An RNA of 177 nucleotides, treated with 2A3 and DMS and read out base by base.

RNA sequence: GGGAACGACUCGAGUAGAGUCGAAAACAUUACUGUGAUGACAGGAGGAUUCUUCCUACUAAUGAUGCAGCGAAAGGGUAUAGGGAAGAUGGGUCUUGGAGCUCUGGUGCUCACGCUAGCUACCUUCAUACGCACGUCACUUCGGUGACGUGCGUAUAAAAGAAACAACAACAACAAC
Reactivity to 2A3 in 0.01 (KOAc 150mM, MgCl2 10mM, bicine 150mM(pH8.5), 24C), signal-to-noise 2, nucleotides 027 to 126: c030a040u080u280a100c040u060g000u040g170a140u120g080a050c010a000g100g050a010g000g000a090u230u000c000u000u010c080c000u060a180c070u000a060a060u050g120a070u150g050c010a010g000c030g110a050a140a030g200g020g020u080a000u230a150g100g000g000a000a000g030a000u170g020g010g010u000c000u020u070g000g000a000g000c000u000c000u000g090g000u120g020c000u010c000a090c030g010c000u000a020g000c000u000a010c000c080u050u040c000
Reactivity to DMS in 0.01 (KOAc 150mM, MgCl2 10mM, bicine 150mM(pH8.5), 24C), signal-to-noise 1, nucleotides 027 to 126: c030a070u000u030a060c030u070g000u000g040a070u000g000a210c130a000g020g010a030g000g000a160u060u000c090u000u000c010c000u000a050c080u010a150a060u000g000a060u010g010c070a010g000c030g000a100a120a040g010g010g000u000a080u040a080g020g010g000a010a010g010a070u010g010g000g000u010c020u060u000g000g030a030g000c010u040c060u040g010g000u000g000c020u000c080a070c020g000c050u070a000g040c100u000a060c030c040u000u000c170
For 2A3, 764 sequencing reads were counted. For DMS the reverse transcriptase was MarathonRT.